[RMDB]
Annotation:
An RNA of 177 nucleotides, treated with DMS and 2A3 and read out base by base. 2A3 adducts were read by reverse transcription with SuperScript II with manganese. Reactivities are given for positions 27 through 126. For 2A3, 8,272 sequencing reads were counted. It was measured as part of the RMDB library OK1LIB.

RNA sequence: GGGAACGACUCGAGUAGAGUCGAAAAGAAGGCAGCGACCGAGCUGAAGACCAUGCGCUGGACGACCAAAGGUGACUUCAGUCAUCUCCACGCUAACCCACUGAUAUGCAAGUAGUUUAGAUUAAACUCUACUCCAAUUAUUCGUAAUUGGAGUAGAAAAAGAAACAACAACAACAAC
Reactivity to DMS in 0.01 (KOAc 150mM, MgCl2 10mM, bicine 150mM(pH8.5), 24C), signal-to-noise 6, nucleotides 027 to 126: g020a140a110g000g000c010a080g010c030g030a100c040c050g010a080g010c030u010g000a080a060g010a110c070c070a080u000g010c010g050c100u000g000g010a100c130g000a080c060c070a040a110a070g000g020u000g020a050c030u020u010c160a170g000u000c020a020u010c030u000c070c050a060c070g020c040u010a070a100c000c010c020a090c090u010g000a040u010a070u020g000c110a150a100g030u010a040g000u000u000u010a070g020a100u020u020a080a060a070c130
Reactivity to 2A3 in 0.01 (KOAc 150mM, MgCl2 10mM, bicine 150mM(pH8.5), 24C), signal-to-noise 9, nucleotides 027 to 126: g090a010a030g060g000c010a030g000c030g050a060c060c030g020a030g010c040u050g030a050a010g060a050c010c030a040u110g020c030g020c100u080g010g040a050c060g050a070c030c030a110a070a050g020g000u030g020a020c000u140u050c160a020g010u010c000a020u010c010u000c010c010a040c020g010c010u040a090a090c010c000c010a030c040u060g050a080u080a080u290g080c090a130a050g040u050a020g030u100u080u090a150g040a230u090u180a030a070a060c030